Structure probing data (DMS and 2A3) for a 177-nucleotide construct. The data come from the RNA Mapping Database (RMDB), libraries RFM100 and RFMREP. The reactions ran in a buffer of 150 mM KOAc, 10 mM MgCl2 and 150 mM bicine (pH 8.5), at 24 C.

[RMDB]
RNA sequence: GGGAACGACUCGAGUAGAGUCGAAAACAUCAAAACAAAAAACAGGGUUCUGUAACCGGUGCGACAAUAUGCCCUUCCAAGGCACUGACCGGCACGGAUAAAACUUUAUUUGCCUAGUCGUAUAACGUUUAUCGUAUUGAUUCGUCAAUACGAUAAAAAAAGAAACAACAACAACAAC
Reactivity to DMS in 0.01 (KOAc 150mM, MgCl2 10mM, bicine 150mM(pH8.5), 24C), signal-to-noise 9, nucleotides 027 to 126: c090a070u050c110a080a060a120a130c120a030a070a070a070a080a080c160a060g000g000g020u010u000c010u010g000u010a290a120c010c000g010g010u000g010c170g000a020c140a020a040u020a060u010g010c010c000c020u000u030c220c230a110a130g010g000c010a040c040u000g000a030c020c010g000g000c240a040c070g000g000a050u010a060a080a070a050c080u010u010u010a060u020u000u000g000c100c040u010a050g010u000c050g010u010a070u020a110a100c140g000
Reactivity to 2A3 in 0.01 (KOAc 150mM, MgCl2 10mM, bicine 150mM(pH8.5), 24C), signal-to-noise 9, nucleotides 027 to 126: c020a060u220c080a020a070a060a110c110a030a150a050a020a010a020c050a040g040g010g030u050u010c010u030g030u040a060a060c010c000g000g000u020g010c020g010a010c030a040a020u020a020u060g000c000c000c000u130u050c080c020a030a030g000g000c010a000c020u010g010a020c010c000g000g000c010a010c010g020g000a020u100a050a070a000a000c020u080u150u120a120u070u130u070g030c010c020u040a070g040u050c030g030u130a090u050a200a070c060g010